[RMDB]
Source: RMDB libraries RFM100 and RFMREP, as collected in RNAgym. This 177-nucleotide RNA was probed chemically with DMS and 2A3. 2A3 adducts were read by reverse transcription with SuperScript II with manganese. 2A3 is a SHAPE reagent: it acylates the 2'-hydroxyl of flexible nucleotides of all four kinds.
RNA sequence: GGGAACGACUCGAGUAGAGUCGAAAAGCAGGCCUUAGCGGCAAUGGACAGCAGGCACAGGACCAGCUUUGCCUCGAGCCGCAACGCUGAUGCCAGAAAAGGACAACCUCUCCAGAAUCGCCGCAGUAGUCUAGGAAGUUUUCGAACUUCCUAGACUAAAAGAAACAACAACAACAAC
Reactivity to DMS in 0.01 (KOAc 150mM, MgCl2 10mM, bicine 150mM(pH8.5), 24C), signal-to-noise 4, nucleotides 027 to 126: g030c070a140g000g020c040c030u010u000a130g010c010g000g000c010a060a120u010g000g000a060c120a110g030c100a070g000g000c060a080c120a090g010g010a070c080c030a100g000c060u010u000u030g000c030c030u020c100g020a120g000c030c100g000c100a060a070c070g020c020u020g000a080u030g000c010c020a090g000a050a070a100a150g000g010a100c090a150a120c070c020u000c020u000c000c040a070g000a090a080u030c120g000c000c000g000c040a150g020u000
Reactivity to 2A3 in 0.01 (KOAc 150mM, MgCl2 10mM, bicine 150mM(pH8.5), 24C), signal-to-noise 7, nucleotides 027 to 126: g070c060a030g030g030c020c020u060u070a020g000c020g040g000c020a040a070u100g050g030a030c050a030g060c020a010g040g010c020a020c020a070g040g060a080c040c030a010g030c030u050u060u080g020c010c010u060c060g050a040g050c030c000g000c020a000a010c010g000c010u020g030a070u130g040c000c010a030g070a040a090a010a010g070g010a030c020a020a070c020c010u030c010u000c010c000a020g060a080a070u090c060g000c030c010g020c030a050g070u030